[RMDB]
RNA sequence: GGGAACGACUCGAGUAGAGUCGAAAAGAUAUGGAUCGCCCACAGCUGAUGACCUAGAUCGGAAACGAUCUAGCAAGGCUCGUGGCGAUCCUAAGUCAAAACAAGUGGGCGUUCGCGCCCACUUGAACUAUAUAUCGAAGUUCGCUUCGAUAUAUAGAAAAGAAACAACAACAACAAC
Reactivity to DMS in 0.01 (KOAc 150mM, MgCl2 10mM, bicine 150mM(pH8.5), 24C), signal-to-noise 8, nucleotides 027 to 126: g000a040u000a300u010g000g010a010u000c000g000c080c010c050a040c090a030g020c010u000g010a080u020g000a170c300c010u000a000g000a010u000c000g010g010a120a100a180c010g000a010u000c000u000a000g000c020a060a100g010g010c000u000c170g030u000g010g000c020g010a000u000c000c000u000a010a070g000u000c040a120a100a150a230c000a010a000g020u000g000g010g000c000g010u000u010c270g020c010g020c010c000c010a000c000u000u000g000a050a150
Reactivity to 2A3 in 0.01 (KOAc 150mM, MgCl2 10mM, bicine 150mM(pH8.5), 24C), signal-to-noise 6, nucleotides 027 to 126: g020a000u060a030u120g010g000a010u010c010g040c070c110c030a030c030a010g030c000u060g020a300u120g020a220c020c000u000a010g010a010u000c000g020g020a050a060a020c010g000a010u000c000u000a000g010c000a080a300g020g000c020u080c220g030u070g000g000c000g010a000u020c000c000u000a010a000g000u010c020a000a000a190a300c010a010a000g010u020g000g020g000c030g050u100u170c300g030c020g050c180c000c000a010c000u000u000g000a000a000